Overview:
The record gives the reactivity of an RNA of 177 nucleotides to 2A3 and DMS. The RNA was probed in 150 mM KOAc, 10 mM MgCl2 and 150 mM bicine (pH 8.5) at 24 C.

[RMDB]
RNA sequence: GGGAACGACUCGAGUAGAGUCGAAAAGGAACGUUGUUCGCAACGUUCCGUGCCGGAAACGGACAUGACGAUCGCGCGCAUGUCGGGAAUCCGUAAACGCGAGCAUCAUGGUGUUCGCACCAUGAAAAGUUAUAGAUUAGUUCGCUAAUCUAUAACUAAAAGAAACAACAACAACAAC
Reactivity to 2A3 in 0.01 (KOAc 150mM, MgCl2 10mM, bicine 150mM(pH8.5), 24C), signal-to-noise 9, nucleotides 027 to 126: g000g000a000a000c010g000u000u010g020u060u090c210g000c110a000a000c000g000u000u000c000c000g000u030g040c010c010g060g050a170a180a030c070g060g010a010c000a010u030g060a110c010g040a070u050c030g000c010g000c010g000c040a010u010g010u040c030g020g040g020a100a070u040c040c020g030u140a080a160a050c020g000c010g010a010g050c030a080u040c000a000u010g000g000u010g030u030u040c200g010c070a000c000c000a010u010g020a060a050a010
Reactivity to DMS in 0.01 (KOAc 150mM, MgCl2 10mM, bicine 150mM(pH8.5), 24C), signal-to-noise 9, nucleotides 027 to 126: g000g000a010a000c000g020u000u000g010u000u010c180g020c010a040a010c000g010u000u000c000c000g010u010g020c060c010g010g000a060a110a150c030g000g000a030c010a010u000g000a110c020g000a080u000c060g000c040g010c040g000c010a030u000g000u000c020g010g010g010a110a120u010c140c020g000u010a040a090a060c060g000c010g000a030g010c300a150u000c000a010u000g010g010u000g010u000u010c190g020c010a010c000c000a000u000g000a030a070a080